[RMDB]
RNA sequence: GGGAACGACUCGAGUAGAGUCGAAAAGUAAAGGCCGAACGAGCGCUAAUGCGCAUGCUAGAAAAUGGUAGGCCUUCGUAGUGUGAGCAUGAGCACGAAAGAAACACACACAUGCACGUGCAAAAAAUGAAUAAGACGAGUUCGCUCGUCUUAUUCAAAAAGAAACAACAACAACAAC
Reactivity to DMS in 0.01 (KOAc 150mM, MgCl2 10mM, bicine 150mM(pH8.5), 24C), signal-to-noise 3, nucleotides 027 to 126: g000u010a070a030a000g010g030c000c000g010a140a160c170g010a060g050c010g030c000u000a140a110u000g000c000g030c010a050u000g020c030u010a080g000a100a070a100a040u010g000g010u000a090g010g000c010c000u000u000c070g020u000a080g020u000g000u020g000a070g010c010a030u000g010a130g010c010a020c050g000a110a060a130g010a080a070a060c060a040c070a030c060a060c050a050u010g000c050a070c100g010u000g010c050a000a020a050a050a050a060
Reactivity to 2A3 in 0.01 (KOAc 150mM, MgCl2 10mM, bicine 150mM(pH8.5), 24C), signal-to-noise 2, nucleotides 027 to 126: g030u070a010a080a000g000g030c020c000g030a050a010c060g010a040g060c000g000c080u220a290a090u300g010c020g000c000a040u130g000c030u080a070g130a160a210a070a100u110g050g000u010a020g030g030c000c000u020u020c000g010u040a090g000u000g020u010g050a010g050c020a030u040g070a010g030c010a000c030g000a070a090a010g120a020a100a010c090a000c020a000c000a000c000a100u040g030c020a010c010g000u050g030c070a020a040a010a000a020a140